[RMDB]
RNA sequence: GGGAACGACUCGAGUAGAGUCGAAAAGAUAUGGAUUCGACGGUCAGUCAUUCAGCUUUUGACGUUCGGCAUUCGGAAACGAAUGUUUCGAACGAUAAGCUGAUGACUGACCGUCGAAUCCUAAGUCCAUAGACGUACAGUUCGCUGUACGUCUAUGAAAAGAAACAACAACAACAAC
Reactivity to DMS in 0.01 (KOAc 150mM, MgCl2 10mM, bicine 150mM(pH8.5), 24C), signal-to-noise 3, nucleotides 027 to 126: g010a100u010a300u000g000g010a020u000u000c000g000a020c000g000g010u000c000a000g010u000c000a020u010u010c020a000g000c010u000u000u000u000g010a240c130g010u000u000c000g020g000c010a010u000u010c020g000g000a150a110a240c000g010a000a010u000g010u000u020u010c020g010a010a010c010g000a090u010a010a020g010c000u010g010a020u000g000a020c000u000g000a000c010c000g000u000c000g010a010a000u000c000c000u000a010a060g000u010c040